[RMDB]
RNA sequence: GGGAACGACUCGAGUAGAGUCGAAAAAGGUGUGUGCUUGUGGGAACAUUUUUGUAAUAUCAGCUUCUCUGCUAAGGACAGCGAUCAUGUCUCUUUUAUCAUUUGGUAUGUGUUGCUGCAGCACUUACGUAACACGUAGUUUCGACUACGUGUUACGAAAAGAAACAACAACAACAAC
Reactivity to 2A3 in 0.01 (KOAc 150mM, MgCl2 10mM, bicine 150mM(pH8.5), 24C), signal-to-noise 2, nucleotides 027 to 126: a010g150g000u100g000u010g000u010g010c040u130u090g050u030g020g020g050a010a020c020a100u120u150u110u120u120g120u160a100a060u040a080u140c020a010g020c000u180u120c130u020c060u120g060c040u070a010a020g050g010a050c040a000g000c040g060a060u080c020a040u060g050u000c040u040c000u100u110u010u080a140u110c090a070u040u080u170g020g030u030a020u080g090u060g080u060u020g030c010u020g000c020a040g000c000a010c040u030u140a030
Reactivity to DMS in 0.01 (KOAc 150mM, MgCl2 10mM, bicine 150mM(pH8.5), 24C), signal-to-noise 5, nucleotides 027 to 126: a060g010g020u000g020u010g010u000g000c020u000u010g040u000g010g000g000a090a050c060a080u000u000u010u000u010g010u010a090a070u010a060u010c080a070g010c130u000u000c050u010c080u010g010c090u000a060a100g000g010a070c070a030g010c120g010a090u000c100a050u000g000u000c030u000c040u000u000u000u000a060u010c120a100u000u000u000g010g010u000a000u000g020u000g010u000u010g000c010u000g020c040a050g010c030a030c020u000u000a080
Structure probing data (2A3 and DMS) for a 177-nucleotide construct. The RNA was probed in 150 mM KOAc, 10 mM MgCl2 and 150 mM bicine (pH 8.5) at 24 C. The DMS profile rests on 7,272 reads.